[RMDB]
RNA sequence: GGGAACGACUCGAGUAGAGUCGAAAACGAAUAGAAUUCGUUCUAUUCGAAUGACUGCUAAAAGCAGAGUUGACUGCGCCGAGCAGAAACGGCAAAGGAAAAAGUAGCCCAGAUUCGUCUGGGCUAACUCAAUAUUCUACUUCGGUAGAAUAUUGAGAAAAGAAACAACAACAACAAC
Reactivity to DMS in 0.01 (KOAc 150mM, MgCl2 10mM, bicine 150mM(pH8.5), 24C), signal-to-noise 6, nucleotides 027 to 126: c000g010a010a000u000a010g000a030a050u000u010c180g020u000u000c000u000a010u010u000c010g010a120a110u010g010a110c020u000g000c010u000a060a050a060a150g010c000a010g010a170g020u000u000g010a200c000u000g020c290g010c020c020g010a110g000c050a070g010a080a090a100c010g000g010c050a070a210a090g010g000a050a050a080a080a140g010u000a020g000c000c010c000a000g000a030u010u010c170g010u000c000u000g010g010g020c000u000a000a030
Reactivity to 2A3 in 0.01 (KOAc 150mM, MgCl2 10mM, bicine 150mM(pH8.5), 24C), signal-to-noise 4, nucleotides 027 to 126: c000g000a000a010u000a000g000a010a030u070u040c140g030u090u010c010u000a000u000u000c000g000a020a030u110g060a030c020u020g020c030u070a090a090a070a020g000c010a000g030a030g110u060u110g120a140c000u010g000c000g000c030c020g030a020g060c090a070g160a100a080a010c010g020g020c030a060a060a060g060g040a120a150a030a010a020g110u020a000g010c010c000c000a000g000a020u040u060c120g040u010c090u030g000g000g020c000u000a000a000

An RNA of 177 nucleotides, treated with DMS and 2A3 and read out base by base. It was measured as part of the RMDB library M2PK50. The DMS profile rests on 7,476 reads. Values cover nucleotides 27 to 126. High DMS reactivity at an A or C suggests that its Watson-Crick edge is free. 2A3 is a SHAPE reagent: it acylates the 2'-hydroxyl of flexible nucleotides of all four kinds.